[RMDB]
RNA sequence: GGGAACGACUCGAGUAGAGUCGAAAAUCAGUGGUGCCAGCCUCAUAUCAGUCUGGGGCAAAGCAAUUCCUUGUUUAUCCCAGCUUGGCUUUUGGUUUGUGCCGGUGCCUGGUUCAUGCCCUGGACACUAUUAUCUUGCCUUCGGGCAAGAUAAUAGAAAAGAAACAACAACAACAAC
Reactivity to 2A3 in 0.01 (KOAc 150mM, MgCl2 10mM, bicine 150mM(pH8.5), 24C), signal-to-noise 9, nucleotides 027 to 126: u090c030a020g080u040g090g020u030g040c030c010a020g010c020c000u050c040a130u140a070u130c030a020g100u020c010u010g000g000g020g000c040a070a060a000g020c010a010a050u160u150c040c050u080u030g050u050u090u060a070u040c000c000c010a000g020c030u030u050g030g010c000u080u040u070u180g110g030u100u100u150g130u160g030c000c010g050g020u060g020c010c010u030g010g010u040u060c040a050u140g000c000c000c000u010g050g000a010c010a000
Reactivity to DMS in 0.01 (KOAc 150mM, MgCl2 10mM, bicine 150mM(pH8.5), 24C), signal-to-noise 5, nucleotides 027 to 126: u030c080a050g010u010g010g020u000g000c010c010a120g010c020c040u000c050a060u010a090u010c090a060g000u010c020u000g010g000g010g000c030a050a050a050g010c040a040a050u030u030c140c110u010u000g010u010u010u000a170u000c030c000c000a100g010c060u010u000g010g000c160u010u010u010u020g000g010u010u000u010g020u010g010c030c000g020g020u000g010c080c010u000g000g010u010u000c130a090u010g000c020c000c010u000g000g000a070c080a200